Source: RMDB library OK3TST, as collected in RNAgym. An RNA of 207 nucleotides, treated with 2A3 and DMS and read out base by base. Reactivities are given for positions 27 through 156. For 2A3, 3,554 sequencing reads were counted. The RNA was probed in 150 mM KOAc, 10 mM MgCl2 and 150 mM bicine (pH 8.5) at 24 C. For DMS the reverse transcriptase was MarathonRT.
RNA sequence: GGGAACGACUCGAGUAGAGUCGAAAAGGGAUAAGUUUUCUGUAGAAAAGCUGACUCAAGGUUUUCGCUCUUCUCAACGCUCAGAGUUGAACCGCUUUCAUUCAGUUAAGGAAGUCAAAGAAUACCGCUCAGAACGUGACAGAGAAGCCAAAGAACGGUGUAUACGAAGUUUCGACUUCGUAUACACAAAAGAAACAACAACAACAAC
Reactivity to 2A3 in 0.01 (KOAc 150mM, MgCl2 10mM, bicine 150mM(pH8.5), 24C), signal-to-noise 5, nucleotides 027 to 156: g050g000g020a040u090a140a080g010u050u000u040u060c070u120g150u140a050g070a070a080a020a030g030c020u020g040a050c030u020c070a040a160g070g000u040u020u010u040c030g000c010u010c000u080u040c040u030c050a060a100c060g000c040u060c070a040g000a000g020u030u070g040a010a020c010c010g030c030u020u040u040c030a100u070u060c030a020g100u060u150a090a020g020g020a020a030g020u110c080a150a020a010g060a040a030u070a120c030c020g010c020u010c020a030g010a080a000c030g040u020g040a030c030a040g030a000g010a050a010g040c040c050a090a050a020g100a050a010c080g050
Reactivity to DMS in 0.01 (KOAc 150mM, MgCl2 10mM, bicine 150mM(pH8.5), 24C), signal-to-noise 3, nucleotides 027 to 156: g040g020g010a060u000a050a100g030u000u000u000u010c030u020g020u020a200g010a110a040a050a060g000c020u000g010a150c050u000c080a080a140g020g000u000u000u000u020c070g020c020u000c010u000u010c030u000c020a070a060c060g010c010u000c030a150g020a020g020u000u010g010a040a160c050c090g010c040u000u000u000c020a130u000u010c030a110g020u000u010a080a110g000g000a020a040g020u000c070a050a050a080g010a070a130u000a080c050c060g000c030u000c030a120g020a040a040c030g010u000g000a100c070a060g010a120g010a060a080g020c050c040a030a070a090g000a070a060c050g000